[RMDB]
Description:
An RNA of 177 nucleotides, treated with DMS and read out base by base. For DMS, 1,516 sequencing reads were counted. The data come from the RNA Mapping Database (RMDB), library TTRINS.
RNA sequence: GGGAACGACUCGAGUAGAGUCGAAAAGAUAUGGAUCAUCAACGGUGAGUACAGACUAUUAGCUAAAUCGUCGGAAACGACGAUUUAGCUAACGAAUCUGUACCUGAAUCCGUUAUGAUCCUAAGUCCAGUUUAGUGUUGUUCGCAACACUAAACUGAAAAGAAACAACAACAACAAC
Reactivity to DMS in 0.01 (KOAc 150mM, MgCl2 10mM, bicine 150mM(pH8.5), 24C), signal-to-noise 2, nucleotides 027 to 126: g000a090u000a300u000g000g010a010u000c000a000u000c300a020a010c010g020g010u000g020a150g010u000a000c000a000g030a020c110u000a300u020u020a000g000c000u000a010a010a020u000c000g000u000c010g000g000a090a100a270c010g000a000c000g010a000u000u000u000a000g000c000u000a010a000c150g000a080a180u000c000u010g010u000a000c010c050u020g000a140a120u010c000c000g010u010u000a030u000g000a000u020c000c000u000a000a080g010u030c010